Annotation: This 177-nucleotide RNA was probed chemically with 2A3 and DMS. The reactions ran in a buffer of 150 mM KOAc, 10 mM MgCl2 and 150 mM bicine (pH 8.5), at 24 C. The 2A3 profile rests on 1,145 reads. 2A3 adducts were read by reverse transcription with SuperScript II with manganese.
[RMDB]
RNA sequence: GGGAACGACUCGAGUAGAGUCGAAAAUAUUAUAGCGCACUAAAGACGCUGAUCUUUAGUUACCAAGGAACUUUAGUGCUGAGGUCCGAGUUCCAAGGACCCAUGUCGGACCUUAGCACUAAUUGAAGCUCUAUACGUACUUCGGUACGUAUAGAGCAAAAGAAACAACAACAACAAC
Reactivity to 2A3 in 0.01 (KOAc 150mM, MgCl2 10mM, bicine 150mM(pH8.5), 24C), signal-to-noise 2, nucleotides 027 to 126: u110a000u170u270a130u170a170g050c040g000c000a000c030u030a010a030a000g070a000c010g070c300u190g060a120u000c000u000u020u020a010g000u080u090a130c050c070a030a010g100g020a100a110c040u040u080u030a000g000u010g060c000u000g000a000g000g000u000c010c010g040a010g010u120u150c090c000a070a010g100g020a020c090c020c000a030u210g140u020c010g050g000a010c000c000u000u000a000g020c040a000c000u000a010a000u000u050g080a050a000
Reactivity to DMS in 0.01 (KOAc 150mM, MgCl2 10mM, bicine 150mM(pH8.5), 24C), signal-to-noise 1, nucleotides 027 to 126: u010a050u010u020a120u020a060g030c050g030c140a080c020u000a020a010a010g000a010c020g020c230u010g010a080u000c020u000u000u000a010g000u000u020a070c080c050a060a100g000g000a120a060c050u010u000u000a000g020u000g020c000u000g000a000g040g000u000c000c020g000a060g010u000u000c080c100a060a050g050g000a130c110c000c040a100u000g020u000c000g000g010a000c010c010u010u000a000g000c000a010c000u000a000a000u000u010g020a090a130